[RMDB]
RNA sequence: GGGAACGACUCGAGUAGAGUCGAAAACAGGGUACGAGGGAUUGUAAAGGCUCACUCGGUCUACAGUCCCGUACCCAUAGACUACUUUUGUACUAGACCGAGUGAGCCUUUAGUCAGAAGUGGUCUGGGAACACGGACAUUUCGAUGUUUGUGUUCCAAAAGAAACAACAACAACAAC
Reactivity to 2A3 in 0.01 (KOAc 150mM, MgCl2 10mM, bicine 150mM(pH8.5), 24C), signal-to-noise 9, nucleotides 027 to 126: c030a020g010g000g020u060a020c030g070a270g040g050g010a010u020u020g020u010a000a010a000g000g000c010u030c120a090c020u000c010g000g000u000c000u000a010c000a000g010u010c010c000c000g000u000a000c000c000c000a000u080a000g000a000c000u010a010c000u030u040u030u060g030u050a010c000u000a010g010a020c020c000g000a010g030u230g020a000g010c000c000u000u000u000a010g000u000c010a000g010a070a010g010u010g010g010u000c020u030g030
Reactivity to DMS in 0.01 (KOAc 150mM, MgCl2 10mM, bicine 150mM(pH8.5), 24C), signal-to-noise 6, nucleotides 027 to 126: c080a080g000g010g010u010a010c020g000a130g010g010g000a050u010u010g010u000a000a000a010g000g010c010u000c010a020c010u000c000g000g000u000c000u010a010c070a030g010u000c000c020c020g020u010a010c020c020c020a040u040a020g010a050c020u000a020c030u000u010u000u010g000u050a030c090u000a000g010a010c000c010g000a010g010u010g000a000g010c000c000u000u000u000a000g010u000c030a100g010a040a050g010u000g000g000u000c010u010g010